Description:
Structure probing data (DMS and 2A3) for a 177-nucleotide construct. High 2A3 reactivity points to a flexible backbone, as in loops and unpaired stretches. For DMS the reverse transcriptase was MarathonRT. It was measured as part of the RMDB library M2PK90. Values cover nucleotides 27 to 126. The RNA was probed in 150 mM KOAc, 10 mM MgCl2 and 150 mM bicine (pH 8.5) at 24 C.
[RMDB]
RNA sequence: GGGAACGACUCGAGUAGAGUCGAAAAACGAUGGCCGUAUAUCGGGCCAAAAGGUACGUCCGAGACUAGGACGUUAAUAGGCCCGGAGUGUAAGCGUAGAAAUACGUGGAGCUGAAAAUAAAACAAAGACUAGUACUCAGUUCGCUGAGUACUAGUCAAAAGAAACAACAACAACAAC
Reactivity to DMS in 0.01 (KOAc 150mM, MgCl2 10mM, bicine 150mM(pH8.5), 24C), signal-to-noise 2, nucleotides 027 to 126: a070c120g010a100u010g000g000c030c000g010u060a110u000a100u000c020g030g000g040c010c010a010a060a090a050g020g020u010a010c000g020u000c000c040g020a230g010a130c190u010a070g030g010a010c000g020u010u000a030a040u000a190g000g010c020c000c020g010g000a020g000u000g000u030a290a150g000c000g020u010a010g010a080a070a200u000a010c000g010u000g020g000a300g000c010u020g000a000a090a040a040u020a060a030a130a120c110a040a080a150
Reactivity to 2A3 in 0.01 (KOAc 150mM, MgCl2 10mM, bicine 150mM(pH8.5), 24C), signal-to-noise 1, nucleotides 027 to 126: a010c060g120a160u180g170g000c010c000g060u030a080u020a020u300c010g000g000g000c020c010a050a050a040a000g050g020u050a000c000g000u000c000c030g050a060g070a110c130u070a110g000g020a000c000g020u000u000a060a020u030a040g010g000c000c010c000g000g040a010g010u040g000u050a040a000g000c000g000u010a000g010a050a030a050u010a010c000g000u020g000g030a020g020c020u050g100a080a100a060a010u170a020a160a020a010c060a050a140a010